[RMDB]
RNA sequence: GGGAACGACUCGAGUAGAGUCGAAAAGAAACGCAAGGCCGCUGACCGACGGGAUAUUGUGGGGCUUACCACAGGGGACGCGGCGUUAUCACUUGCCUUUUAAGCCGACCGUCUGAGCUGCAUACAAACCACCCAACUAUCUUCGGAUAGUUGGGAACAUAUUUCGGAAGUUCGCUUCCGAAAUAUGAAAAGAAACAACAACAACAAC
Reactivity to DMS in 0.01 (KOAc 150mM, MgCl2 10mM, bicine 150mM(pH8.5), 24C), signal-to-noise 3, nucleotides 027 to 156: g010a060a030a070c070g010c010a050a080g010g010c000c010g010c020u000g010a230c040c020g020a170c030g000g010g020a110u000a080u010u000g040u000g030g010g000g030c160u000u010a080c030c020a050c050a080g010g010g030g000a280c130g000c030g000g000c010g010u000u010a060u010c070a260c030u010u000g000c020c050u000u000u000u000a080a100g020c000c010g010a110c040c020g030u010c000u000g000a170g020c010u000g000c020a090u010a090c080a060a090a120c010c040a190c030c000c000a000a010c000u000a020u000c000u010u010c300g030g010a020u000a000g010u000u010g010g000g000a010a020
Reactivity to 2A3 in 0.01 (KOAc 150mM, MgCl2 10mM, bicine 150mM(pH8.5), 24C), signal-to-noise 5, nucleotides 027 to 156: g030a010a040a000c100g010c030a010a010g090g020c010c010g020c040u060g070a040c010c030g030a040c030g050g060g010a100u100a100u230u080g010u020g010g020g060g080c090u080u100a070c000c010a010c010a040g010g000g000g040a000c050g000c020g030g020c000g010u040u020a020u050c010a010c090u010u010g010c010c020u060u140u050u050a050a020g020c000c000g040a060c000c020g020u010c030u050g040a020g030c020u040g020c050a040u050a110c070a020a100a030c040c020a070c000c000c000a000a000c000u000a000u010c010u030u060c130g090g000a000u000a000g000u000u000g000g000g010a000a010